The record gives the reactivity of an RNA of 207 nucleotides to DMS and 2A3.
The 2A3 profile rests on 4,045 reads.
For 2A3 the reverse transcriptase was SuperScript II with manganese.
It was measured as part of the RMDB library OK3TST.
The DMS profile rests on 3,677 reads.
The RNA was probed in 150 mM KOAc, 10 mM MgCl2 and 150 mM bicine (pH 8.5) at 24 C.

RNA sequence: GGGAACGACUCGAGUAGAGUCGAAAACUGCAGGUCAACGGAGCGUCUUCAGAUCAGCUAUUGCAGAAGAAAGGUCAGCCAAGCGCUCUGGGCCCGCUCGACUGUAUAUAGGAGCUUCUGAUUUCAACCAGAAGCUAACUCUCUCCGAAACAAUGAGCCCAUUUAAAUGAUUCGUCAUUUAAAUGGGAAAAGAAACAACAACAACAAC
Reactivity to DMS in 0.01 (KOAc 150mM, MgCl2 10mM, bicine 150mM(pH8.5), 24C), signal-to-noise 2, nucleotides 027 to 156: c030u000g000c020a050g040g010u000c020a070a130c020g030g020a030g070c010g030u000c030u000u000c060a230g000a060u000c050a270g010c040u000a110u000u000g010c070a160g000a100a150g000a060a090a070g020g020u000c030a070g020c100c140a050a190g010c040g020c040u000c030u000g000g000g020c010c040c010g010c020u000c030g020a130c040u000g000u000a110u000a130u010a110g000g030a110g000c000u040u000c000u000g010a030u000u010u000c140a120a040c040c000a010g000a040a010g020c010u000a020a050c040u000c080u000c010u000c020c000g000a160a090a090c050a130a140u010g000a180g010
Reactivity to 2A3 in 0.01 (KOAc 150mM, MgCl2 10mM, bicine 150mM(pH8.5), 24C), signal-to-noise 6, nucleotides 027 to 156: c030u040g020c020a010g020g020u040c030a080a070c070g020g000a000g000c010g040u100c020u100u080c040a030g000a070u030c030a010g100c080u110a100u240u240g050c060a040g060a210a010g050a060a140a010g030g000u020c010a010g020c060c030a050a020g000c000g000c000u000c010u020g000g020g000c010c010c000g020c020u030c030g110a120c070u090g080u110a070u020a020u050a210g080g030a010g020c000u000u010c000u000g070a120u130u280u280c070a070a050c040c000a010g000a010a000g000c000u000a010a010c000u020c000u010c000u000c010c040g090a060a070a050c040a050a150u140g010a040g040